This 177-nucleotide RNA was probed chemically with DMS and 2A3. 2A3 adducts were read by reverse transcription with SuperScript II with manganese. Reactivities are given for positions 27 through 126. The DMS profile rests on 717 reads. For 2A3, 1,869 sequencing reads were counted. The RNA was probed in 150 mM KOAc, 10 mM MgCl2 and 150 mM bicine (pH 8.5) at 24 C. Values are in units of 0.01, from 0 to 300, in steps of 10.
RNA sequence: GGGAACGACUCGAGUAGAGUCGAAAACGUCUAGUCUGCGAUGCACAUGAGCGUACAUCGCUGGAUCCUAGAUACAGUACGACGCUGCACUAGUCAUCGUGUCAUGCAUGGAUCGCGACGUACGAUCCCUCCUUGCCGGGUUCGCCCGGCAAGGAGGAAAAGAAACAACAACAACAAC
Reactivity to DMS in 0.01 (KOAc 150mM, MgCl2 10mM, bicine 150mM(pH8.5), 24C), signal-to-noise 1, nucleotides 027 to 126: c150g030u000c000u010a080g010u040c030u010g030c000g000a000u050g000c020a050c050a150u000g070a200g020c180g000u000a000c000a000u000c020g030c010u000g010g010a020u010c300c000u000a040g010a010u000a110c200a100g030u000a020c020g010a040c010g010c000u000g010c230a130c030u000a030g030u060c080a050u000c020g000u000g000u000c070a080u010g000c060a040u000g010g020a040u000c290g010c070g000a090c020g000u000a050c030g000a080u000c020
Reactivity to 2A3 in 0.01 (KOAc 150mM, MgCl2 10mM, bicine 150mM(pH8.5), 24C), signal-to-noise 2, nucleotides 027 to 126: c060g010u000c030u030a000g020u010c000u020g020c000g000a000u020g130c040a040c000a080u220g270a080g130c170g000u000a010c020a030u020c000g000c060u060g020g010a040u060c030c000u020a010g010a020u070a040c100a020g030u010a020c050g030a030c030g000c030u020g010c080a020c070u090a060g100u160c020a020u050c090g080u040g110u190c050a040u100g070c040a040u080g060g030a020u020c030g000c030g000a040c000g010u040a000c020g040a020u080c000